Conditions: 150 mM KOAc, 10 mM MgCl2 and 150 mM bicine (pH 8.5), 24 C. This 177-nucleotide RNA was probed chemically with DMS and 2A3. The 2A3 profile rests on 89,641 reads. For 2A3 the reverse transcriptase was SuperScript II with manganese.

[RMDB]
RNA sequence: GGGAACGACUCGAGUAGAGUCGAAAAGAUGACUUCCAGGAGGGCGAGCCAUAUCUACGCGAGAUGUAACUUCAUUGUCUCAAGGGAAGUGAAGCACGAUAGUGGCCUACUUCCCCUCACUGGAAGAGAUAGGUGACGAGUUCGCUCGUUAUCUAUCAAAAGAAACAACAACAACAAC
Reactivity to DMS in 0.01 (KOAc 150mM, MgCl2 10mM, bicine 150mM(pH8.5), 24C), signal-to-noise 9, nucleotides 027 to 126: g010a120u030g000a140c000u000u000c000c000a000g000g000a020g000g010g030c300g000a140g000c000c000a020u010a010u000c010u010a100c150g000c080g010a110g010a160u040g010u010a120a170c010u000u000c010a030u010u010g010u020c030u010c080a080a120g010g000g000a030a010g000u000g000a040a050g010c100a100c220g000a020u000a020g010u010g000g000c080c090u020a090c150u020u030c220c000c000c000u000c000a070c000u000g000g000a000a000g010a050
Reactivity to 2A3 in 0.01 (KOAc 150mM, MgCl2 10mM, bicine 150mM(pH8.5), 24C), signal-to-noise 4, nucleotides 027 to 126: g120a070u160g020a020c000u000u000c000c000a000g000g000a000g000g000g010c060g020a020g000c000c000a010u010a010u000c020u030a040c110g020c070g080a040g020a090u220g060u090a040a030c000u010u010c010a030u030u110g210u150c040u020c090a060a090g130g020g000a010a000g000u000g010a020a000g020c070a010c120g010a010u020a040g260u080g010g000c010c010u050a110c040u140u100c000c000c000c000u000c010a210c000u000g000g000a000a000g000a000
The data come from the RNA Mapping Database (RMDB), library OK1LIB.